RNA sequence: GGGAACGACUCGAGUAGAGUCGAAAACGUUAGCUAAUUAAAACAUUUUUCAGGGACGUAGCCAUCCAGAGGUAAGAGCCUAGAGAGUGCAAUUCAUUUAUUUCUGCUAACCAUGUAUGCUGUUCUUUAUUGGCGGUCGCGGAAUGGAGAGUAAACAGAUUUAGCUAUUAUUCGUAAUAGCUAAAUCAAAAGAAACAACAACAACAAC
Reactivity to DMS in 0.01 (KOAc 150mM, MgCl2 10mM, bicine 150mM(pH8.5), 24C), signal-to-noise 5, nucleotides 027 to 156: c060g010u000u000a060g010c030u000a110a110u010u000a070a090a120a090c030a090u000u000u000u000u000c060a090g020g010g010a050c110g000u000a150g030c020c020a120u010c040c080a110g000a120g020g020u000a060a150g010a140g020c040c020u000a060g010a090g010a070g020u000g000c050a040a110u000u010c090a090u020u000u000a070u030u000u000c050u000g020c020u000a070a080c040c060a100u000g000u000a100u010g030c030u010g020u000u010c060u000u000u000a090u050u000g000g020c030g000g020u000c050g020c050g010g000a060a070u000g010g010a110g010a150g020u010a040a080a090c070a150
Reactivity to 2A3 in 0.01 (KOAc 150mM, MgCl2 10mM, bicine 150mM(pH8.5), 24C), signal-to-noise 9, nucleotides 027 to 156: c030g010u050u030a010g020c040u080a090a100u150u130a090a170a090a070c070a120u110u100u070u160u160c070a060g010g010g040a010c020g030u040a020g030c010c010a040u040c020c030a030g020a040g080g000u060a100a030g020a020g070c010c010u060a020g010a000g010a010g050u040g000c030a060a090u080u100c030a030u050u090u200a090u040u140u030c060u040g020c020u020a030a030c020c020a040u060g030u070a070u080g050c020u020g040u100u060c020u030u160u100a150u060u050g030g020c030g020g010u050c050g010c040g030g030a030a020u050g030g020a050g010a000g070u140a070a070a050c060a040

Structure probing data (DMS and 2A3) for a 207-nucleotide construct. In probing experiments dimethyl sulfate is read out at A N1 and C N3, which are open when not base-paired. The data come from the RNA Mapping Database (RMDB), library OK3TST.